Source information: Chemical mapping of a 177-nucleotide RNA with DMS and 2A3. For 2A3 the reverse transcriptase was SuperScript II with manganese. The RNA was probed in 150 mM KOAc, 10 mM MgCl2 and 150 mM bicine (pH 8.5) at 24 C. For 2A3, 1,248 sequencing reads were counted. For DMS the reverse transcriptase was MarathonRT.

RNA sequence: GGGAACGACUCGAGUAGAGUCGAAAACAUAUGACGGAGAGUGGAACACUCAGCGGAAACGCAUCCAAUGUCUGAAGUCUUUAAUGGGUAUAACACUCAGUUGACCCAGAUCCCAACAGACAAUAAACUCAAGUACGGAGUUCGCUCCGUACUUGAGAAAAGAAACAACAACAACAAC
Reactivity to DMS in 0.01 (KOAc 150mM, MgCl2 10mM, bicine 150mM(pH8.5), 24C), signal-to-noise 1, nucleotides 027 to 126: c070a060u010a100u000g000a000c040g020g000a020g010a000g000u000g020g110a100a100c110a060c050u000c040a140g030c070g010g010a120a100a080c060g000c000a300u020c100c050a070a100u000g000u020c010u000g000a080a080g050u000c000u010u000u010a290a160u000g000g000g000u000a060u020a000a040c050a100c230u000c130a110g010u000u000g000a070c040c000c000a030g010a160u000c030c000c020a050a080c040a020g000a000c050a050a130u020a070a160a080
Reactivity to 2A3 in 0.01 (KOAc 150mM, MgCl2 10mM, bicine 150mM(pH8.5), 24C), signal-to-noise 2, nucleotides 027 to 126: c030a030u180a040u270g110a020c090g070g000a000g030a000g090u030g060g250a080a080c070a000c030u010c030a030g050c000g040g000a040a060a010c000g000c000a000u050c040c050a080a130u060g000u000c010u020g040a090a020g040u020c000u040u040u020a060a030u080g020g000g000u070a170u060a300a010c080a030c060u280c150a130g020u020u030g020a000c050c000c000a010g000a010u000c000c010c000a000a060c000a000g020a000c020a010a050u180a160a080a020